[RMDB]
RNA sequence: GGGAACGACUCGAGUAGAGUCGAAAAGAUAUGGAGGGUUCGGUAGCGUUGCGUUUGACGAUGAUCCUGAAUCGGAAACGAUUCAGGAUCAUCCGAGCAACGAACUACUACGAACCCUCCUAAGUCACUAGUUAUGGACGUUCGCGUCCAUAACUAGAAAAGAAACAACAACAACAAC
Reactivity to DMS in 0.01 (KOAc 150mM, MgCl2 10mM, bicine 150mM(pH8.5), 24C), signal-to-noise 2, nucleotides 027 to 126: g000a040u000a300u010g020g000a020g010g030g010u000u020c000g040g000u000a000g000c000g020u000u000g000c030g000u020u000u030g000a270c300g010a040u010g030a000u000c010c000u000g000a010a000u000c000g030g000a120a030a260c020g010a000u010u000c010a010g000g000a000u000c000a000u000c010c030g000a170g030c000a000a010c000g000a060a120c030u000a100c020u030a130c050g010a000a000c010c010c010u010c000c000u000a000a090g000u000c020a260
The record gives the reactivity of an RNA of 177 nucleotides to DMS. Reactivities are rounded to 0.1 and cut off at 0 and 3. DMS adducts were read by reverse transcription with MarathonRT. Reactivities are given for positions 27 through 126.